Source: RMDB library OK1LIB, as collected in RNAgym. Chemical mapping of a 177-nucleotide RNA with DMS and 2A3. For DMS, 1,842 sequencing reads were counted. Reactivities are given for positions 27 through 126. Values are in units of 0.01, from 0 to 300, in steps of 10.
RNA sequence: GGGAACGACUCGAGUAGAGUCGAAAAAGCCUGUGGAUAAGUCAGCACAAACUCAGGGGAUUGAUCCUGACGCACGUUCUCAUGACAGGCCAAAAGAGAAUUGUGCGAUUUUUAAGCAAUGCGCGUACACUGCUUAAGGCUUCGGCCUUAAGCAGUGAAAAGAAACAACAACAACAAC
Reactivity to DMS in 0.01 (KOAc 150mM, MgCl2 10mM, bicine 150mM(pH8.5), 24C), signal-to-noise 2, nucleotides 027 to 126: a060g000c000c000u000g020u030g000g000a100u010a080a100g020u000c110a120g040c070a060c110a050a190a140c100u010c040a050g020g000g030g000a220u030u010g030a100u030c020c010u000g000a100c060g030c000a000c010g020u010u000c000u000c030a160u040g040a090c130a050g020g040c040c030a050a080a180a120g000a030g020a000a020u000u040g060u010g010c000g010a030u000u010u030u000u040a140a080g030c070a000a040u050g000c060g020c010g000u000a190
Reactivity to 2A3 in 0.01 (KOAc 150mM, MgCl2 10mM, bicine 150mM(pH8.5), 24C), signal-to-noise 3, nucleotides 027 to 126: a020g040c000c020u050g000u040g040g040a140u060a230a050g020u050c030a040g000c040a020c010a060a170a050c050u000c010a000g090g020g020g050a180u070u240g030a020u070c000c000u010g000a020c000g010c000a040c010g010u000u000c010u000c000a070u070g030a040c050a060g010g000c000c010a040a120a060a040g000a000g030a020a110u270u300g010u010g010c000g000a000u030u020u030u100u290a050a010g010c050a050a070u110g020c030g000c000g030u020a040